[RMDB]
RNA sequence: GGGAACGACUCGAGUAGAGUCGAAAAGUCUAGCGAACGGAUCCCACCCGGGAUACACGCAAGUCGCGAAUUACGCCGACCGGCCAAGGUCAAUCGCAGAACUCAACUGCAUGAGUAAGCUAGACGAAAAUGAUUAUGCUUUCGAGCAUAAUCAUUUAAAAGAAACAACAACAACAAC
Reactivity to 2A3 in 0.01 (KOAc 150mM, MgCl2 10mM, bicine 150mM(pH8.5), 24C), signal-to-noise 5, nucleotides 027 to 126: g000u000c000u000a000g000c010g040a050a040c020g030g040a020u020c000c000c000a050c010c060c000g020g000g010a040u060a120c090a010c080g020c050a060a020g090u070c020g000c010g050a090a140u200u100a130c090g050c100c040g010a040c000c010g030g050c060c040a090a040g030g010u010c020a010a050u060c060g000c030a030g020a160a070c040u080c190a070a150c040u030g010c030a050u100g040a030g070u020a010a010g000c000u000a000g000a010c000g010a020
Reactivity to DMS in 0.01 (KOAc 150mM, MgCl2 10mM, bicine 150mM(pH8.5), 24C), signal-to-noise 8, nucleotides 027 to 126: g010u000c000u000a000g010c010g010a230a070c040g000g020a050u000c000c000c000a180c300c080c200g000g000g000a060u000a090c060a080c080g010c060a080a070g000u000c080g000c050g010a150a090u000u020a070c130g010c080c090g020a070c020c090g010g010c060c070a130a130g000g010u000c050a080a080u000c080g000c010a060g020a080a070c120u010c140a060a110c050u000g020c050a130u000g010a110g000u020a040a290g000c010u000a000g000a020c010g000a080
Chemical mapping of a 177-nucleotide RNA with 2A3 and DMS. For DMS the reverse transcriptase was MarathonRT. The reactions ran in a buffer of 150 mM KOAc, 10 mM MgCl2 and 150 mM bicine (pH 8.5), at 24 C. It was measured as part of the RMDB library OK2TRN. The 2A3 profile rests on 8,992 reads.